[RMDB]
RNA sequence: GGGAACGACUCGAGUAGAGUCGAAAACAUGAGAGCGAUAUGGACGUAGUUAUUUAAGACAGUAGUGGCUUCGGAAACGAAGCCCUACAAUGACGAAUAGGUUCGAAGUCCUAAGUCUAACGGUAAACCAGUACAUAAGCUUCGGCUUAUGUACUGGAAAAGAAACAACAACAACAAC
Reactivity to 2A3 in 0.01 (KOAc 150mM, MgCl2 10mM, bicine 150mM(pH8.5), 24C), signal-to-noise 2, nucleotides 027 to 126: c090a150u260g170a080g020a000g150c100g020a030u020a040u170g000g010a000c010g030u060a040g080u050u060a050u090u150u080a130a070g110a090c090a070g020u020a000g040u070g180g030c000u000u000c000g000g000a000a000a000c010g000a000a000g010c020c010c000u000a000c000a020a040u100g040a000c070g040a150a060u070a090g230g030u110u130c010g060a190a030g020u000c000c010u010a050a010g000u000c000u060a070a040c020g130g040u150a050a020a100
Reactivity to DMS in 0.01 (KOAc 150mM, MgCl2 10mM, bicine 150mM(pH8.5), 24C), signal-to-noise 2, nucleotides 027 to 126: c110a060u010g010a090g000a090g040c110g030a080u000a100u010g010g000a040c000g030u000a180g010u000u020a050u000u000u000a100a170g000a140c160a070g010u000a010g010u000g020g000c000u000u000c010g000g000a060a040a130c000g000a000a000g000c000c000c000u000a000c000a130a100u020g010a080c110g000a070a030u000a030g000g000u000u010c080g010a110a170g000u000c000c010u010a060a100g010u000c030u000a100a060c050g000g010u010a080a120a120
Chemical mapping of a 177-nucleotide RNA with 2A3 and DMS. 2A3 adducts were read by reverse transcription with SuperScript II with manganese. The data come from the RNA Mapping Database (RMDB), library TTRDEL. The RNA was probed in 150 mM KOAc, 10 mM MgCl2 and 150 mM bicine (pH 8.5) at 24 C. The DMS profile rests on 1,780 reads. Values cover nucleotides 27 to 126.